[RMDB]
Chemical mapping of a 207-nucleotide RNA with DMS and 2A3. The DMS profile rests on 2,029 reads. The data come from the RNA Mapping Database (RMDB), library M2RFPK. For 2A3 the reverse transcriptase was SuperScript II with manganese. DMS adducts were read by reverse transcription with MarathonRT. Conditions: 150 mM KOAc, 10 mM MgCl2 and 150 mM bicine (pH 8.5), 24 C.
RNA sequence: GGGAACGACUCGAGUAGAGUCGAAAAAUACACCAGCAGUAGGACUCAGCGACCGUCACAACAAGGUUGUGCUGGUAUCCGACGGUCGUAUAGCCCUGUCUUGCGGGUUGCCUUGCACUGACGUGCCACACCAUUUACAGAUUCGUCUGUAAAUGAAGUUCUUCCUGGUAUUCGUACCAGGAAGAACAAAAGAAACAACAACAACAAC
Reactivity to DMS in 0.01 (KOAc 150mM, MgCl2 10mM, bicine 150mM(pH8.5), 24C), signal-to-noise 1, nucleotides 027 to 156: a140u050a080c040a250c000c000a060g000c030a020g060u000a010g020g040a100c020u010c150a260g020c000g010a000c000c010g060u010c030a180c150a120a110c050a130a020g000g020u000u000g090u010g000c000u010g050g000u010a080u000c060c030g000a030c000g040g050u000c010g010u000a070u020a030g050c060c020c010u040g010u000c010u010u000g040c000g000g020g000u000u000g030c030c090u010u000g010c010a030c040u010g020a150c190g050u000g000c000c030a130c010a170c090c010a010u000u000u000a000c000a010g030a040u000u000c300g030u010c010u020g000u000a000a010a000u000g000a040a160
Reactivity to 2A3 in 0.01 (KOAc 150mM, MgCl2 10mM, bicine 150mM(pH8.5), 24C), signal-to-noise 3, nucleotides 027 to 156: a000u130a020c110a010c020c020a000g030c000a000g030u080a000g000g000a050c020u040c130a000g020c000g010a000c010c000g000u010c020a100c060a200a130c090a270a090g100g020u050u020g040u040g070c050u080g050g010u040a070u040c030c090g010a000c000g000g000u010c000g000u020a040u110a030g030c000c010c020u010g070u050c080u050u120g030c030g010g030g000u030u060g050c000c020u010u080g000c000a010c050u140g110a080c120g010u020g010c060c020a080c010a010c030c010a010u000u000u000a000c000a000g010a040u010u150c150g110u000c050u000g000u000a000a000a000u010g020a030a010